[RMDB]
RNA sequence: GGGAACGACUCGAGUAGAGUCGAAAAGUCUGACAUCAUUGUGUGCAAUAACGAGCAUCAUCCUGGCGAACCUAAUACGUUCACGGCUGAGAGAGUUGAGGUCAAGAUGGGCCCUGUGAAACACAGUAGUAUGGAGUUUGAGGGUGGCUCAUACAGAGUCGUAGUACAACUUCGGUUGUACUACGACAAAAGAAACAACAACAACAAC
Reactivity to DMS in 0.01 (KOAc 150mM, MgCl2 10mM, bicine 150mM(pH8.5), 24C), signal-to-noise 1, nucleotides 027 to 156: g030u020c070u000g030a090c020a060u000c030a080u030u000g070u010g000u000g010c010a050a120u010a140a090c120g000a140g010c030a100u010c020a070u000c000c020u000g050g030c010g030a050a030c030c030u040a200a110u010a110c150g030u010u000c010a150c080g010g090c050u090g000a040g010a160g020a060g030u000u020g010a090g030g000u000c010a030a050g050a060u000g050g040g030c050c010c010u010g000u020g010a120a050a000c030a050c060a030g030u000a100g040u000a030u000g020g000a120g070u000u000u000g010a100g030g030g030u000g000g000c030u010c030a080u000a120c030a060g000a150
Reactivity to 2A3 in 0.01 (KOAc 150mM, MgCl2 10mM, bicine 150mM(pH8.5), 24C), signal-to-noise 3, nucleotides 027 to 156: g040u010c020u030g010a030c000a080u080c040a060u080u100g070u040g010u010g060c050a090a120u070a140a120c090g030a030g040c000a010u030c010a050u030c020c020u030g060g020c080g010a010a010c000c020u050a110a020u020a080c020g030u000u010c040a010c050g050g030c040u030g010a010g010a000g010a000g100u030u160g040a050g050g010u020c040a060a010g060a110u060g010g000g000c000c030c020u020g040u030g030a070a060a000c040a000c020a050g070u080a010g010u020a050u070g070g000a030g040u060u060u080g060a040g010g020g020u020g000g000c000u010c020a020u050a040c040a020g100a000

Notes
This 207-nucleotide RNA was probed chemically with DMS and 2A3. For 2A3, 1,685 sequencing reads were counted. DMS adducts were read by reverse transcription with MarathonRT. Reactivities are given for positions 27 through 156.